[RMDB]
RNA sequence: GGGAACGACUCGAGUAGAGUCGAAAAUUGCAAGCCUUCGGGCUUGCAAGGUGUCGGAAUGCGGAAUAUAUAAUCCUCCGCUUAAGGAUUAAACCGACUUAAGUGCCAGGCUGUUCGCAGCCUGGAAACGCCCUCGUAAAUUCGUUUACGAGGGCGUAAAAGAAACAACAACAACAAC
Reactivity to DMS in 0.01 (KOAc 150mM, MgCl2 10mM, bicine 150mM(pH8.5), 24C), signal-to-noise 1, nucleotides 027 to 126: u000u000g000c000a000a010g010c020c000u010u020c230g050g020g020c000u000u000g000c000a000a000g010g010u000g000u000c000g000g010a120a080u000g000c020g040g010a030a060u000a130u010a220u010a130a080u020c200c100u000c010c010g020c010u000u000a060a090g000g000a110u030u010a080a080a180c050c000g000a050c010u020u000a020a020g010u010g020c040c000a020g020g010c000u000g020u010u000c210g020c000a000g000c000c000u020g020g000a010a100
Structure probing data (DMS) for a 177-nucleotide construct.
The DMS profile rests on 984 reads.
The reactions ran in a buffer of 150 mM KOAc, 10 mM MgCl2 and 150 mM bicine (pH 8.5), at 24 C.